The data come from the RNA Mapping Database (RMDB), library OK1LIB.
Structure probing data (DMS and 2A3) for a 177-nucleotide construct.
The RNA was probed in 150 mM KOAc, 10 mM MgCl2 and 150 mM bicine (pH 8.5) at 24 C.
The DMS profile rests on 1,120 reads.
Values are in units of 0.01, from 0 to 300, in steps of 10.
[RMDB]
RNA sequence: GGGAACGACUCGAGUAGAGUCGAAAAGAAGAGAAUAAAUAGAGGAGUCAGGGUUCGCACACGCUCCGCGAACCAACGGUAACACUGACUGUGGAGCGGAAAAGGCAGAUACCGAACUGCCAAAGAACCACUAUGGCGUGUUCGCACGCCAUAGUGGAAAAGAAACAACAACAACAAC
Reactivity to DMS in 0.01 (KOAc 150mM, MgCl2 10mM, bicine 150mM(pH8.5), 24C), signal-to-noise 1, nucleotides 027 to 126: g000a120a030g040a200g050a220a030u010a070a100a080u140a040g020a090g000g000a000g000u000c000a040g000g040g000u000u000c000g000c030a040c280a120c060g010c000u000c000c000g040c000g000a000a070c040c020a070a000c110g030g100u230a080a180c230a300c020u000g000a000c000u000g020u010g000g070a020g000c080g020g000a070a070a050a100g000g010c000a000g000a010u000a100c110c070g010a140a110c000u000g000c000c000a010a050a050g020a140a030
Reactivity to 2A3 in 0.01 (KOAc 150mM, MgCl2 10mM, bicine 150mM(pH8.5), 24C), signal-to-noise 2, nucleotides 027 to 126: g100a020a000g140a010g030a070a080u120a040a250a040u220a060g100a090g040g100a030g020u000c000a010g050g020g000u000u070c030g000c010a040c030a030c030g020c040u000c000c000g040c000g000a000a000c000c000a030a000c180g060g010u050a030a000c060a020c030u050g070a050c030u030g090u050g030g000a000g000c010g010g010a050a090a000a000g000g000c010a010g000a020u100a190c010c040g020a040a000c020u000g000c000c000a000a010a010g040a010a030